[RMDB]
Record summary:
Chemical mapping of a 177-nucleotide RNA with DMS and 2A3. It was measured as part of the RMDB library 15KREP. 2A3 adducts were read by reverse transcription with SuperScript II with manganese. Reactivities are given for positions 27 through 126. The 2A3 profile rests on 2,338 reads. In probing experiments dimethyl sulfate is read out at A N1 and C N3, which are open when not base-paired. For DMS the reverse transcriptase was MarathonRT.

RNA sequence: GGGAACGACUCGAGUAGAGUCGAAAACUAGAUUCCCAGAGAGAAUCGAGAGAAAACUGGCUCUCCCUUAGCCAUCCGAGUGGACGUUGUCCUCCUUCGGAUGCCCAGGUCGGACCGCGAGGAGGUGCUAUGUAUUUGCGUUCGCGCAAAUACAUAGAAAAGAAACAACAACAACAAC
Reactivity to DMS in 0.01 (KOAc 150mM, MgCl2 10mM, bicine 150mM(pH8.5), 24C), signal-to-noise 3, nucleotides 027 to 126: c140u000a080g000a170u000u000c000c010c030a180g010a120g000a110g010a080a020u020c040g020a080g020a080g000a080a050a090a090c120u000g000g000c010u000c010u000c010c010c040u000u000a070g020c090c020a010u000c010c010g010a050g000u000g000g000a010c040g010u010u010g010u000c020c010u000c050c110u000u010c020g020g000a030u000g010c070c050c060a050g010g000u010c060g010g010a160c050c050g000c070g000a080g000g010a070g010g000u000g000
Reactivity to 2A3 in 0.01 (KOAc 150mM, MgCl2 10mM, bicine 150mM(pH8.5), 24C), signal-to-noise 2, nucleotides 027 to 126: c020u030a040g020a110u020u010c000c010c060a020g020a000g000a010g000a040a090u090c070g010a000g020a020g040a110a130a020a040c080u070g050g000c000u000c030u020c000c010c020u030u060a020g000c030c000a010u000c000c010g000a020g030u080g000g050a040c110g160u150u150g030u060c000c010u010c020c020u040u020c000g010g000a000u010g010c010c000c000a050g000g060u040c000g030g050a030c020c010g000c040g000a030g020g010a020g010g010u030g010